[RMDB]
RNA sequence: GGGAACGACUCGAGUAGAGUCGAAAAAUAUGGUGGUGUGUGUCUGUAGUCUCAGCUACUUGGUGGGGGGCUGAGGCCAGUGGAUCGCUUGAGCCUGGGAGAUUGAGACUGCAGUGAGCUAUCAUCAUGCCACUGCACUCCAACCUGGGUGACAGAAUACUACCCUCCUAUUCGUAGGAGGGUAGUAAAAAGAAACAACAACAACAAC
Reactivity to 2A3 in 0.01 (KOAc 150mM, MgCl2 10mM, bicine 150mM(pH8.5), 24C), signal-to-noise 2, nucleotides 027 to 156: a000u200a050u110g030g000u010g040g000u000g010u020g050u010g010u000c030u040g080u060a030g030u020c040u040c000a010g000c000u070a180c030u160u040g060g010u070g010g100g010g000g000g000c010u010g020a020g000g000c000c030a010g000u020g040g020a030u060c030g010c020u000u030g070a010g000c020c000u020g000g000g000a150g000a060u050u060g030a040g000a070c120u020g000c000a020g000u000g010a040g010c000u060a070u230c070a060u110c040a040u180g000c000c000a000c000u000g000c000a000c010u000c000c000a000a060c000c000u020g000g000g000u010g000a000c020a000g080a080a000
Chemical mapping of a 207-nucleotide RNA with 2A3. The RNA was probed in 150 mM KOAc, 10 mM MgCl2 and 150 mM bicine (pH 8.5) at 24 C. 2A3 is a SHAPE reagent: it acylates the 2'-hydroxyl of flexible nucleotides of all four kinds. It was measured as part of the RMDB library OK3TST. For 2A3, 985 sequencing reads were counted.